About this RNA
An RNA of 177 nucleotides, treated with 2A3 and DMS and read out base by base. Reactivities are given for positions 27 through 126. As a SHAPE reagent, 2A3 marks flexible, mostly unpaired nucleotides at the ribose 2'-OH.

RNA sequence: GGGAACGACUCGAGUAGAGUCGAAAAGCUGGGCACGGUUGCCGCCAGCGAAGACAUCUCCCAUGCUAAUGGCGGAGUUGUCGAUUAGCAGCUUGACUCAGCCGAUGCUCGGAGUCUUGCUGCGAAAGGGAUCCUUCUCCUUCGGGAGGAGGAUCCCAAAAGAAACAACAACAACAAC
Reactivity to 2A3 in 0.01 (KOAc 150mM, MgCl2 10mM, bicine 150mM(pH8.5), 24C), signal-to-noise 3, nucleotides 027 to 126: g010c020u020g030g000g000c070a040c150g070g100u080u080g030c000c020g090c010c000a000g000c020g020a030a010g000a010c000a030u000c020u020c000c000c050a030u190g070c100u210a180a020u160g190g000c080g020g000a000g000u000u010g000u040c000g000a060u000u000a030g010c000a030g000c000u010u000g000a000c000u000c030a020g000c000c150g180a140u300g030c110u090c270g110g000a000g000u000c010u000u000g000c000u000g000c020g020a040a030a000
Reactivity to DMS in 0.01 (KOAc 150mM, MgCl2 10mM, bicine 150mM(pH8.5), 24C), signal-to-noise 2, nucleotides 027 to 126: g000c010u020g000g000g000c080a090c090g000g000u020u010g010c050c050g010c010c010a000g000c000g030a150a110g000a030c020a000u000c010u000c000c010c070a140u000g010c140u020a160a060u020g000g010c120g010g020a090g000u010u000g000u000c000g000a190u050u000a090g010c000a000g010c000u000u010g000a000c000u000c000a100g010c110c200g020a160u000g020c080u000c200g000g000a030g000u000c000u000u020g000c000u010g000c000g000a020a090a120

2A3 adducts were read by reverse transcription with SuperScript II with manganese. The reactions ran in a buffer of 150 mM KOAc, 10 mM MgCl2 and 150 mM bicine (pH 8.5), at 24 C. For 2A3, 1,451 sequencing reads were counted.